RNA sequence: GGGAACGACUCGAGUAGAGUCGAAAAGAUAUGGACGUAUGUAAAGGCUAUGAAGUCGGAAACGAUGGAGCCUGCAUGACGUCCUAAGUCAAACACGUGAAUAGAGCUUCGGCUCUAUUCACGUGAAGACGACUGGUAAGUUCGCUUACCAGUCGUCAAAAGAAACAACAACAACAAC
Reactivity to DMS in 0.01 (KOAc 150mM, MgCl2 10mM, bicine 150mM(pH8.5), 24C), signal-to-noise 2, nucleotides 027 to 126: g000a010u020a300u000g000g010a000c000g090u000a020u010g020u000a060a120a030g040g040c020u000a300u020g010a100a200g000u000c000g000g010a060a070a190c010g000a010u000g010g000a000g020c000c010u020g010c060a030u000g000a030c010g030u010c000c000u010a000a060g000u000c030a120a060a270c050a000c000g010u020g030a010a000u020a020g000a010g010c030u000u020c300g000g000c000u010c000u000a010u000u000c000a000c020g040u000g000a040a100
Reactivity to 2A3 in 0.01 (KOAc 150mM, MgCl2 10mM, bicine 150mM(pH8.5), 24C), signal-to-noise 1, nucleotides 027 to 126: g020a040u040a050u190g010g000a000c010g000u010a010u030g020u000a230a260a080g000g000c020u040a300u300g030a000a000g010u040c000g040g080a060a050a050c000g010a000u010g010g010a010g000c010c030u000g000c010a010u050g300a060c000g000u010c000c000u000a030a020g050u000c060a010a100a060c000a010c030g010u000g010a000a020u000a030g000a030g000c050u130u190c300g000g010c000u030c000u000a000u010u000c020a010c000g000u010g000a000a000

Description:
Chemical mapping of a 177-nucleotide RNA with DMS and 2A3. For 2A3, 1,408 sequencing reads were counted. 2A3 adducts were read by reverse transcription with SuperScript II with manganese. For DMS, 1,102 sequencing reads were counted. The RNA was probed in 150 mM KOAc, 10 mM MgCl2 and 150 mM bicine (pH 8.5) at 24 C. Source: RMDB library TTRDEL, as collected in RNAgym.